[RMDB]
RNA sequence: GGGAACGACUCGAGUAGAGUCGAAAAGAUAUGGAUCACGGUCACUUUUGACGGCUGGUGCUCGGAAACGAGCAGAAGGCCGAUAAGUGACGUGAUCCUAAGUCAAACCCGGGCUUCGGCCCGGGAAGGUUGAGAGAAAGUUCGCUUUCUCUCAACCAAAAGAAACAACAACAACAAC
Reactivity to DMS in 0.01 (KOAc 150mM, MgCl2 10mM, bicine 150mM(pH8.5), 24C), signal-to-noise 2, nucleotides 027 to 126: g010a030u010a300u000g000g000a000u000c000a000c000g010g010u000c000a010c000u000u000u030u000g030a260c140g010g000c010u010g010g010u000g000c020u010c010g000g000a110a150a160c000g020a030g000c030a040g000a300a200g010g010c010c000g020a050u000a010a010g010u010g000a030c010g020u000g000a020u000c000c000u000a000a060g010u000c090a090a070a280c010c010c000g010g010g020c000u010u010c300g030g000c000c000c000g020g010g000a000a030
Reactivity to 2A3 in 0.01 (KOAc 150mM, MgCl2 10mM, bicine 150mM(pH8.5), 24C), signal-to-noise 2, nucleotides 027 to 126: g010a000u090a000u090g000g020a000u010c030a000c090g240g280u040c010a010c070u120u220u210u240g300a210c170g000g000c010u060g010g250u010g010c000u000c000g000g010a060a160a070c010g000a010g000c000a000g070a010a050g040g020c030c000g010a030u060a100a000g000u000g040a000c000g010u000g010a000u000c000c000u000a000a000g000u010c010a000a020a230c010c000c000g020g000g010c060u130u150c300g160g000c040c010c000g000g020g020a000a000